[RMDB]
RNA sequence: GGGAACGACUCGAGUAGAGUCGAAAACAAACAAACCAACCACACUCAGAGCCCAAAUGAGCCGCGUUAACCUCAUCUCAGCGGCAGAGAUGAUUAGGACGCAUACGUCCAAAGGGCUCUGACAAAACAUGACCUAACACUUCGGUGUUAGGUCAUGAAAAGAAACAACAACAACAAC
Reactivity to 2A3 in 0.01 (KOAc 150mM, MgCl2 10mM, bicine 150mM(pH8.5), 24C), signal-to-noise 5, nucleotides 027 to 126: c060a010a130a020c050a060a100a010c020c030a020a060c030c040a110c020a050c100u010c000a000g000a000g010c000c000c000a040a160a150u150g020a020g050c040c020g000c010g010u030u080a090a130c000c020u020c000a030u000c010u000c010a070g030c030g110g000c030a010g000a000g000a000u020g000a010u030u170a040g000g070a000c010g000c010a030u060a200c080g040u020c010c000a030a030a000g010g000g000c000u000c000u000g000a000c010a000a070a000a020
Reactivity to DMS in 0.01 (KOAc 150mM, MgCl2 10mM, bicine 150mM(pH8.5), 24C), signal-to-noise 2, nucleotides 027 to 126: c110a070a150a190c250a150a140a140c090c080a040a110c220c090a090c270a050c210u000c000a000g000a000g020c010c000c000a000a160a120u030g000a040g000c040c210g030c000g010u000u000a130a140c180c150u000c000a000u000c000u000c000a120g030c020g020g000c030a100g000a010g000a000u000g000a020u020u000a130g000g000a060c000g020c030a040u050a040c300g030u000c010c050a050a160a300g000g000g020c000u000c030u000g000a000c180a010a030a050a080